Description: This 170-nucleotide RNA was probed chemically with DMS and 2A3. The 2A3 profile rests on 6,852 reads. The DMS profile rests on 11,776 reads. The data come from the RNA Mapping Database (RMDB), library 15KLIB. For 2A3 the reverse transcriptase was SuperScript II with manganese. Reactivities are given for positions 27 through 129.
[RMDB]
RNA sequence: GGGAACGACUCGAGUAGAGUCGAAAAACGAGAAAGAGGAGGAUCUCCCUUUGCCAUCCGAGGGAACUACGUUCUCCUUCGGAUGCCCAGGUCGGACCGCGAGGAGGUGGAGAUACCAUGCCGACCCCAACUUUGGCCUUCGGGCCAAAGAAAAGAAACAACAACAACAAC
Reactivity to DMS in 0.01 (KOAc 150mM, MgCl2 10mM, bicine 150mM(pH8.5), 24C), signal-to-noise 2, nucleotides 027 to 129: a160c160g020a000g000a040a060a040g030a090g020g000a040g010g000a000u000c090u050c010c030c070u020u020u050g010c200c000a030u010c020c000g000a030g030g020g030a010a060c110u020a110c220g000u070u070c000u010c030c060u010u010c030g030g020a030u020g000c030c040c080a060g060g010u030c080g000g040a130c020c020g020c020g020a090g000g000a060g010g000u040g000g000a120g020a110u020a060c100c050a100u030g060c000c000g040a150c040c030c040c040a000a000
Reactivity to 2A3 in 0.01 (KOAc 150mM, MgCl2 10mM, bicine 150mM(pH8.5), 24C), signal-to-noise 4, nucleotides 027 to 129: a000c030g030a000g070a000a060a000g040a050g010g000a000g040g010a040u030c040u020c010c040c020u050u040u100g050c020c010a020u000c000c000g000a000g000g000g000a010a000c030u080a040c250g120u190u010c020u000c090c000u010u000c000g000g000a000u010g000c020c000c000a040g010g000u030c050g060g030a050c000c040g090c060g000a050g040g010a010g010g020u050g040g000a070g020a010u110a180c070c000a020u060g040c030c000g010a030c000c000c000c000a030a140